Chemical mapping of a 177-nucleotide RNA with 2A3 and DMS.
Reactivities are given for positions 27 through 126.
The RNA was probed in 150 mM KOAc, 10 mM MgCl2 and 150 mM bicine (pH 8.5) at 24 C.
RNA sequence: GGGAACGACUCGAGUAGAGUCGAAAAGACAGGCACCGUGCCCCGGCGAGCCACGGGAGCCGGCAGCACAUGCAGCGGCGGCAGCUCCACCGGGUCCCCUCGCCUCCCUGCGUCAUGUUGCCGCCAGGCUAUACCAAGUCUUCGGACUUGGUAUAGCAAAAGAAACAACAACAACAAC
Reactivity to 2A3 in 0.01 (KOAc 150mM, MgCl2 10mM, bicine 150mM(pH8.5), 24C), signal-to-noise 4, nucleotides 027 to 126: g060a040c070a050g060g010c020a000c080c110g060u090g020c020c030c000c000g010g030c050g040a050g060c080c070a060c080g020g020g010a030g050c030c010g020g040c020a010g010c010a040c010a060u170g060c030a020g060c050g070g000c000g010g000c010a000g000c010u050c060c010a050c020c020g030g000g040u040c010c020c000c010u030c030g020c000c010u040c000c000c010u040g020c020g030u070c040a060u120g020u040u040g020c000c000g000c020c010a030g080
Reactivity to DMS in 0.01 (KOAc 150mM, MgCl2 10mM, bicine 150mM(pH8.5), 24C), signal-to-noise 8, nucleotides 027 to 126: g010a140c110a090g010g000c030a120c100c060g020u000g000c050c110c030c040g000g010c080g000a140g010c300c060a050c120g010g000g010a160g020c020c020g000g010c100a070g010c060a060c140a100u010g000c060a080g010c120g010g010c020g010g000c010a090g000c020u000c070c080a090c050c050g000g000g000u000c030c020c010c040u000c060g000c020c010u000c020c020c000u000g010c050g000u010c080a080u000g010u000u000g010c010c010g010c020c040a130g010
Description:
The data come from the RNA Mapping Database (RMDB), library OK2TRN.